[RMDB]
RNA sequence: GGGAACGACUCGAGUAGAGUCGAAAAAUACACUGCACGUGCGUGCGUGCAGUUUUCGAAAUAAUCGUACGUACGUAAAGACCCAACUCUACUCGAUGCGAGGGUCAGCAAAGUCGUUCCCAUAUAAGGUGACGUUAUACUUCGGUAUAACGUCACCAAAAGAAACAACAACAACAAC
Reactivity to 2A3 in 0.01 (KOAc 150mM, MgCl2 10mM, bicine 150mM(pH8.5), 24C), signal-to-noise 2, nucleotides 027 to 126: a020u200a000c060a010c030u010g030c020a000c010g020u110g190c160g120u300g020c010g000u000g020c010a010g000u000u020u020u010c020g040a030a050a040u130a030a040u120c030g030u050a110c040g040u040a010c030g000u030a050a100a050g000a020c020c000c000a030a030c000u020c000u010a000c010u000c010g010a020u060g030c040g000a100g000g040g010u030c020a000g040c030a050a300a040g000u000c010g000u000u000c000c000c000a000u000a010u000a000a010

Chemical mapping of a 177-nucleotide RNA with 2A3. It was measured as part of the RMDB library M2PK90. The RNA was probed in 150 mM KOAc, 10 mM MgCl2 and 150 mM bicine (pH 8.5) at 24 C.